[RMDB]
RNA sequence: GGGAACGACUCGAGUAGAGUCGAAAAGCUCAGGUCCAACUUCGAGCGGAUCCGCAAGGGCCAUGGCCAGCCCGGGGCGGACGCCGAGAAGCCCUUCUACGUGAACGUCGAGUUUCACCACGAGCGCGUUGGAUCUUCACUUCGGUGAAGAUCCAACAAAAGAAACAACAACAACAAC
Reactivity to DMS in 0.01 (KOAc 150mM, MgCl2 10mM, bicine 150mM(pH8.5), 24C), signal-to-noise 1, nucleotides 027 to 126: g030c010u000c000a120g000g000u000c040c110a070a100c020u000u000c020g020a200g020c030g000g080a260u000c010c020g000c050a210a150g020g010g040c000c040a080u010g010g010c060c080a300g000c010c000c010g020g020g020g020c010g010g040a020c080g000c020c040g000a120g000a110a140g000c040c020c020u000u000c070u000a170c090g020u000g000a000a080c020g050u000c070g040a220g000u000u000u000c000a030c040c090a090c170g000a020g010c040g020c160
Conditions: 150 mM KOAc, 10 mM MgCl2 and 150 mM bicine (pH 8.5), 24 C. An RNA of 177 nucleotides, treated with DMS and read out base by base. DMS (dimethyl sulfate) methylates the pairing face of unpaired adenines and cytosines. For DMS, 700 sequencing reads were counted. Reactivities are given for positions 27 through 126.